[RMDB]
RNA sequence: GGGAACGACUCGAGUAGAGUCGAAAAUAGGCUUACUUCGGUAAGCCUACAUGGAAAAGGCUAGGACCGGCCAGACAAUGGUCCGAAAACAAAUAAUUAAAAAACCCGAAAGCUUCGGCUUUCGGAACGUGGAUGUAAGUUUCGACUUACAUCCACGAAAAGAAACAACAACAACAAC
Reactivity to 2A3 in 0.01 (KOAc 150mM, MgCl2 10mM, bicine 150mM(pH8.5), 24C), signal-to-noise 1, nucleotides 027 to 126: u030a000g000g030c000u010u000a010c030u080u140c260g110g000u000a000a000g010c000c000u000a000c000a010u100g030g010a030a100a070a300g000g000c000u100a100g100g000a000c000c000g010g050c030c070a060g030a050c100a000a140u170g000g000u000c000c000g000a080a110a000a000c010a000a140a070u230a000a040u300u170a180a300a040a010a000a000c010c000c000g010a000a000a000g020c050u070u240c300g050g000c000u040u000u020c000g000g000a000a000